[RMDB]
RNA sequence: GGGAACGACUCGAGUAGAGUCGAAAAGAAUAAGCAAAAAUGUGAUCUUGCUUGUAAAUACGAUUUUGAGAGGUUAAUAAAUUACAAGUAGUGCGAUUUUUGUCUCUCUCUGCAAUAACGAACCGAAAUUAUCCACGGAUUUCGAUCCGUGGAUAAUAAAAGAAACAACAACAACAAC
Reactivity to 2A3 in 0.01 (KOAc 150mM, MgCl2 10mM, bicine 150mM(pH8.5), 24C), signal-to-noise 3, nucleotides 027 to 126: g000a010a040u220a040a010g030c050a030a030a010a000a000u080g150u110g080a160u020c010u000u030g000c000u000u000g000u010a000a050a000u120a010c080g050a080u030u050u030u100g100a130g020a020g060g030u040u070a100a000u120a060a120a060u100u000a010c000a000a000g040u050a020g090u060g170c050g060a040u040u000u000u000u070g150u000c030u010c010u000c000u000c030u060g000c050a060a070u060a160a090c130g040a030a010c020c020g110a090a150
Reactivity to DMS in 0.01 (KOAc 150mM, MgCl2 10mM, bicine 150mM(pH8.5), 24C), signal-to-noise 3, nucleotides 027 to 126: g000a040a070u030a080a080g020c080a010a030a060a040a040u020g020u020g020a070u000c030u010u000g000c000u000u040g000u000a020a010a020u020a080c110g020a060u010u020u030u010g010a130g010a120g000g000u030u010a080a090u050a040a090a050u010u000a040c060a020a120g010u030a020g010u030g000c090g000a040u020u000u000u000u000g000u020c020u010c050u010c000u000c050u000g000c150a100a060u020a080a050c140g000a140a130c050c060g010a100a050